This 177-nucleotide RNA was probed chemically with 2A3 and DMS.

[RMDB]
RNA sequence: GGGAACGACUCGAGUAGAGUCGAAAAUCGUGAGAUGUGGUGCCUCACGCGCUCGAGGCGUCCGUGGUCAGAGAGACCACUGACGCAAAAACUCGAGCGCAAAUAAAGUGCAUUACAUGAAGAAUAAAGUAAUACUGGUAUUCGUACCAGUAUUACUAAAAGAAACAACAACAACAAC
Reactivity to 2A3 in 0.01 (KOAc 150mM, MgCl2 10mM, bicine 150mM(pH8.5), 24C), signal-to-noise 7, nucleotides 027 to 126: u150c040g030u070g080a120g000a080u120g010u010g000g000u010g000c000c000u040c020a050c090g000c000g000c000u000c000g000a000g010g000c000g000u000c010c010g000u020g000g000u000c030a040g090a060g030a020g000a300c000c000a000c000u000g000a000c000g000c000a060a090a040a040a050c000u000c000g000a000g000c000g000c000a000a010a000u100a010a080a010g120u150g040c000a000u000u020a010c000a010u150g060a070a110g090a070a090u270a200a130
Reactivity to DMS in 0.01 (KOAc 150mM, MgCl2 10mM, bicine 150mM(pH8.5), 24C), signal-to-noise 5, nucleotides 027 to 126: u010c100g020u020g020a090g010a040u010g000u000g000g020u000g000c000c010u010c150a050c200g000c000g000c000u000c000g010a010g010g010c000g010u010c010c060g020u000g030g020u010c010a190g020a200g030a200g010a020c000c010a010c000u010g010a000c000g050c030a020a040a060a070a300c000u000c010g000a000g000c010g010c010a000a020a060u050a090a070a050g000u040g010c000a010u000u000a010c000a030u010g020a110a070g000a090a090u020a080a150
For DMS the reverse transcriptase was MarathonRT. The RNA was probed in 150 mM KOAc, 10 mM MgCl2 and 150 mM bicine (pH 8.5) at 24 C. For 2A3 the reverse transcriptase was SuperScript II with manganese. The DMS profile rests on 15,383 reads. Reactivities are given for positions 27 through 126.